An RNA of 207 nucleotides, treated with 2A3 and DMS and read out base by base. Conditions: 150 mM KOAc, 10 mM MgCl2 and 150 mM bicine (pH 8.5), 24 C. DMS adducts were read by reverse transcription with MarathonRT. 2A3 adducts were read by reverse transcription with SuperScript II with manganese. Values cover nucleotides 27 to 156.
[RMDB]
RNA sequence: GGGAACGACUCGAGUAGAGUCGAAAAACAUGGCUCUGCUGGGCAAAGCAAGGACGGGCACAUCCAGCCUAUGCGGUCCAUCAGGGGCACUCACAUUUAGAAUGGGGGAGUCUUAGUUAGCCCAGGGGCUGGGGGCAGCAUGGUAGUGUAGAAAAAGCGCAUACACAUAAUUCGUUAUGUGUAUGCGAAAAGAAACAACAACAACAAC
Reactivity to 2A3 in 0.01 (KOAc 150mM, MgCl2 10mM, bicine 150mM(pH8.5), 24C), signal-to-noise 3, nucleotides 027 to 156: a000c070a080u070g060g000c000u000c020u060g050c020u020g020g010g010c070a100a080a000g020c010a020a030g000g030a050c040g020g030g030c120a050c020a210u040c000c020a020g040c010c010u070a100u070g020c030g010g000u020c020c000a040u040c020a010g020g000g010g000c000a020c010u070c010a090c000a090u130u180u190a160g050a230a090u150g010g000g000g010g010a050g030u000c020u050u070a100g050u040u110a020g030c000c030c040a030g000g000g000g000c020u050g000g000g000g000g010c010a010g010c010a050u060g050g020u040a050g000u050g040u110a070g040a060a090a020a020a000g060
Reactivity to DMS in 0.01 (KOAc 150mM, MgCl2 10mM, bicine 150mM(pH8.5), 24C), signal-to-noise 2, nucleotides 027 to 156: a090c030a050u000g020g000c000u000c020u120g000c030u040g000g010g080c020a070a130a120g090c060a070a300g020g000a120c040g010g000g000c020a110c210a080u000c010c000a130g100c010c010u000a070u000g000c090g040g020u000c020c000a060u040c060a090g000g010g000g030c040a070c040u000c000a060c080a100u010u000u010a090g000a110a080u000g010g010g010g020g020a090g020u000c030u010u010a090g020u000u000a110g010c000c020c020a100g020g030g010g010c040u010g010g010g030g040g030c030a040g040c020a060u000g040g020u010a100g020u000g040u000a090g000a080a110a090a100a110g010